[RMDB]
RNA sequence: GGGAACGACUCGAGUAGAGUCGAAAAAAUUAUUUGCGCAAUUAAAUGACUUGAGGGCGGGCAAACGCUUGCACAGUUCAACUACAGGCCGCACACCUUUGGGUCCAAUGUAUGACUGGGAAAAAUCCAGACAGAGUUGAUUCGUCAACUCUGUCUGAAAAGAAACAACAACAACAAC
Reactivity to 2A3 in 0.01 (KOAc 150mM, MgCl2 10mM, bicine 150mM(pH8.5), 24C), signal-to-noise 3, nucleotides 027 to 126: a000a020u260u180a130u060u130u150g020c070g010c000a000a000u070u050a140a090a190u170g050a040c050u070u060g020a060g000g020g020c050g020g000g000c040a090a190a070c060g010c030u040u020g010c050a020c020a070g030u130u150c060a100a050c010u040a030c040a030g010g000c000c010g040c010a020c000a020c010c000u030u080u050g040g010g010u010c030c030a040a030u070g020u030a090u070g090a020c030u010g000g000g030a030a070a000a050a000u040c050
Reactivity to DMS in 0.01 (KOAc 150mM, MgCl2 10mM, bicine 150mM(pH8.5), 24C), signal-to-noise 2, nucleotides 027 to 126: a010a070u000u000a080u020u010u010g050c040g000c080a160a080u050u020a040a140a060u000g000a060c030u000u000g020a060g000g000g020c000g020g010g000c070a040a070a110c180g000c050u010u030g030c030a040c090a030g000u020u000c140a160a020c060u000a020c080a030g020g020c000c050g000c030a020c070a080c040c010u000u000u010g010g010g050u000c040c120a010a060u100g000u010a050u010g000a100c070u000g000g010g000a000a050a050a080a090u020c160